Chemical mapping of a 177-nucleotide RNA with 2A3 and DMS.
[RMDB]
RNA sequence: GGGAACGACUCGAGUAGAGUCGAAAAAAAGGCUCAGAUGACGCAGCAAAAACAGGCCACAGCACCACGUGGGUAGGUGAUGUAAUUUUAUUUUCCUCGUCUGCGGCCUAAUGGAUUUCCGGGCGCGGGACGUAGGUUGAUUCGUCAACCUACGUCCAAAAGAAACAACAACAACAAC
Reactivity to 2A3 in 0.01 (KOAc 150mM, MgCl2 10mM, bicine 150mM(pH8.5), 24C), signal-to-noise 3, nucleotides 027 to 126: a000a000a000g040g020c000u010c020a030g000a080u080g000a030c030g030c050a050g010c060a020a090a000a000a000c090a050g000g080c020c030a040c010a000g030c020a030c050c000a060c090g050u120g060g100g030u110a100g000g050u040g010a020u050g060u090a100a150u030u050u020u160a200u040u030u040u010c050c010u020c000g030u000c010u020g020c010g040g000c010c000u090a110a070u120g060g010a030u030u070u000c030c000g000g040g010c090g000c050g020
Reactivity to DMS in 0.01 (KOAc 150mM, MgCl2 10mM, bicine 150mM(pH8.5), 24C), signal-to-noise 2, nucleotides 027 to 126: a060a110a010g010g010c000u020c010a120g010a180u020g010a020c090g020c170a020g000c100a050a060a030a070a080c130a080g000g040c050c080a020c050a040g010c140a050c050c110a000c080g010u020g000g000g000u020a050g040g000u000g010a080u000g000u040a090a080u060u060u020u000a090u000u020u000u000c040c000u000c050g050u000c020u000g020c070g000g000c030c000u000a050a050u000g000g000a210u000u000u000c030c020g030g000g030c060g040c170g070

It was measured as part of the RMDB library OK1LIB.